[RMDB]
RNA sequence: GGGAACGACUCGAGUAGAGUCGAAAAGGACAGUUAAAGGGUAGGUUUCAGGUAUCUAGAAAUUUCAUUUACAUGAAAUGUAUUCUCUGGCCAUGUAAAGUGAGGAAUUGCAAUGCUAAGACUACACACACUCUUUACUGUUCGCAGUAAAGAGUGUAAAAGAAACAACAACAACAAC
Reactivity to DMS in 0.01 (KOAc 150mM, MgCl2 10mM, bicine 150mM(pH8.5), 24C), signal-to-noise 7, nucleotides 027 to 126: g000g000a070c060a050g010u010u010a060a100a070g010g000g020u000a030g010g010u000u000u000c040a040g010g010u010a030u000c050u000a100g000a040a130a070u000u010u000c010a040u000u000u010a090c110a050u000g000a030a050a050u010g000u000a090u000u000c050u000c060u000g000g010c070c040a070u000g010u000a040a030a100g010u010g010a100g000g010a050a070u010u000g010c070a060a070u010g000c060u010a060a060g000a110c060u000a060c130a080c170
Reactivity to 2A3 in 0.01 (KOAc 150mM, MgCl2 10mM, bicine 150mM(pH8.5), 24C), signal-to-noise 5, nucleotides 027 to 126: g030g020a020c020a030g020u100u160a090a020a030g030g000g020u030a020g000g040u040u030u030c030a010g040g030u040a050u040c040u070a060g130a100a160a080u080u140u050c010a020u060u040u120a100c060a020u030g010a030a050a010u090g030u040a090u110u040c050u010c020u050g020g000c010c000a010u030g030u070a040a080a130g030u050g070a040g010g070a050a050u040u050g010c030a050a050u050g010c010u040a070a000g030a080c020u080a030c060a010c000